[RMDB]
RNA sequence: GGGAACGACUCGAGUAGAGUCGAAAAAUUGUGAUGUGAUGACAACUUCUUGAGCUAUAUAUUUUCUUGAGAACAUCAAUGAAGAAAACGUCUCAUCAAAUGAUUUGCACGUCAGUCUGAUCACAAGGCUGAAUAUGGAGUUCGCUCCAUAUUCAGCAAAAGAAACAACAACAACAAC
Reactivity to 2A3 in 0.01 (KOAc 150mM, MgCl2 10mM, bicine 150mM(pH8.5), 24C), signal-to-noise 1, nucleotides 027 to 126: a020u040u030g040u010g020a030u000g030u020g050a040u030g000a000c010a090a050c090u050u050c000u020u010g000a000g010c060u030a020u020a020u020a080u300u070u100u000c030u010u090g020a030g030a070a020c030a060u030c010a010a090u190g030a010a040g010a000a060a000a010c020g010u000c020u000c010a030u000c010a000a250a090u080g010a020u000u040u100g090c120a040c060g010u010c030a090g080u000c000u030g030a000u020c000a000c010a060a000g050
Reactivity to DMS in 0.01 (KOAc 150mM, MgCl2 10mM, bicine 150mM(pH8.5), 24C), signal-to-noise 1, nucleotides 027 to 126: a130u000u000g020u000g040a030u000g040u000g000a030u020g010a080c080a200a170c180u050u000c040u010u000g000a030g000c090u010a130u000a090u020a090u000u000u020u000c040u000u000g000a050g010a050a140c230a020u000c010a020a020u010g040a020a030g000a030a140a100a130c130g020u020c020u000c000a020u000c040a080a070a070u010g000a050u000u000u000g000c160a040c050g000u010c110a140g000u000c020u020g000a050u000c010a030c110a090a000g010